[RMDB]
RNA sequence: GGGAACGACUCGAGUAGAGUCGAAAAUCUUCCUCUAACUGAGUAAUUUCUUCUUCUGUUAACUCUUCCGUAGUAAUGUGAAUAUGUAACUCUUUUUGUGUGCUUUUCAUAGGUGCCUGAUGAUUAAACCCUAAUGUAACUUCGGUUACAUUAGGGUAAAAGAAACAACAACAACAAC
Reactivity to 2A3 in 0.01 (KOAc 150mM, MgCl2 10mM, bicine 150mM(pH8.5), 24C), signal-to-noise 3, nucleotides 027 to 126: u000c010u040u020c000c020u000c050u040a140a090c070u050g030a000g050u080a050a140u130u050u060c010u050u000c010u050u000c030u020g030u100u100a120a110c010u060c000u080u020c010c020g070u080a030g030u030a060a080u070g040u040g030a030a040u110a040u170g040u060a100a100c000u020c000u100u070u060u130u060g080u020g000u020g030c040u070u050u020u020c040a040u090a100g130g000u050g050c000c030u040g040a060u040g000a040u080u180a170a120
Reactivity to DMS in 0.01 (KOAc 150mM, MgCl2 10mM, bicine 150mM(pH8.5), 24C), signal-to-noise 3, nucleotides 027 to 126: u000c140u000u000c030c020u000c090u000a080a120c100u010g010a070g020u010a080a110u000u000u000c020u010u000c050u000u000c030u000g010u000u000a050a110c040u000c020u000u010c030c040g010u000a090g010u010a050a060u000g000u010g010a060a030u000a040u010g000u000a070a060c030u000c020u000u000u000u000u000g020u000g030u000g000c040u000u000u000u000c040a050u000a070g020g030u000g000c020c040u000g010a050u000g000a150u000u000a070a140

This 177-nucleotide RNA was probed chemically with 2A3 and DMS. The RNA was probed in 150 mM KOAc, 10 mM MgCl2 and 150 mM bicine (pH 8.5) at 24 C.